[RMDB]
RNA sequence: GGGAACGACUCGAGUAGAGUCGAAAACUGUGGUGAGACCCUAUCUAGUAUAGCAAUCCACCAAGCAGGUGAGUUCACACAAUUCAGGUUCUCAUAGAAAAUGCGCCCUGACUUGACAGGUAUGGUCAUAUCAUGAUGAGUUCGCUCAUCAUGAUAUAAAAGAAACAACAACAACAAC
Reactivity to DMS in 0.01 (KOAc 150mM, MgCl2 10mM, bicine 150mM(pH8.5), 24C), signal-to-noise 9, nucleotides 027 to 126: c040u000g010u010g020g010u000g000a100g010a050c120c210c010u000a030u000c020u030a110g020u020a060u020a050g000c110a080a130u020c050c000a020c010c020a070a110g020c150a100g020g010u000g010a090g000u000u000c030a110c160a190c100a040a080u020u010c050a030g000g010u010u020c030u010c020a050u020a110g020a070a080a100a040u010g010c100g010c300c000c010u000g000a050c050u000u000g000a070c060a050g010g000u010a040u020g000g000u000c050
Reactivity to 2A3 in 0.01 (KOAc 150mM, MgCl2 10mM, bicine 150mM(pH8.5), 24C), signal-to-noise 9, nucleotides 027 to 126: c020u020g030u080g050g020u050g030a150g020a030c020c020c000u000a020u000c040u040a070g070u120a060u020a060g030c040a020a050u010c010c000a000c000c000a050a030g070c040a020g020g060u030g040a060g010u080u080c030a040c000a000c020a160a080u110u070c030a040g010g010u090u040c030u000c010a030u050a070g220a050a090a020a010u100g020c030g030c020c010c000u040g020a080c020u060u060g030a030c030a040g050g030u100a070u120g050g000u020c030